[RMDB]
RNA sequence: GGGAACGACUCGAGUAGAGUCGAAAACCGGGGAAUCGUGAACCGGGGGUUCCGACCGGGCCGACAGGGGAUGAAGAGCUUUUGCUUUGCUGAGCAGAUGAUGACCACGCCCUUCGCUGACCUGCUACAGUCCCUGUUACUUCGGUAACAGGGACUGAAAAGAAACAACAACAACAAC
Reactivity to DMS in 0.01 (KOAc 150mM, MgCl2 10mM, bicine 150mM(pH8.5), 24C), signal-to-noise 1, nucleotides 027 to 126: c020c010g010g000g000g000a090a120u010c000g000u050g000a300a100c220c010g050g030g010g000g020u000u000c070c000g020a070c080c010g000g020g020c070c060g000a040c100a000g000g000g000g000a020u000g030a150a030g050a110g000c010u010u000u010u050g000c000u000u010u020g000c100u010g000a010g010c010a010g010a060u000g030a050u000g000a120c030c000a150c130g060c020c030c000u000u000c070g000c010u000g010a080c020c010u000g010c140u020a140
Reactivity to 2A3 in 0.01 (KOAc 150mM, MgCl2 10mM, bicine 150mM(pH8.5), 24C), signal-to-noise 3, nucleotides 027 to 126: c010c000g010g020g000g000a140a080u110c070g090u180g040a010a070c020c020g060g020g000g000g050u050u100c000c030g000a010c040c020g010g010g020c010c040g050a060c120a050g000g010g000g000a040u080g050a030a090g030a040g020c010u060u080u030u060g000c010u050u080u120g040c080u090g060a010g030c030a000g010a030u050g010a050u110g070a070c000c040a020c090g030c020c000c000u030u010c020g000c040u010g020a060c000c020u010g070c000u090a070

Source: RMDB library RFM100, as collected in RNAgym. Chemical mapping of a 177-nucleotide RNA with DMS and 2A3. The reactions ran in a buffer of 150 mM KOAc, 10 mM MgCl2 and 150 mM bicine (pH 8.5), at 24 C. For DMS, 1,853 sequencing reads were counted.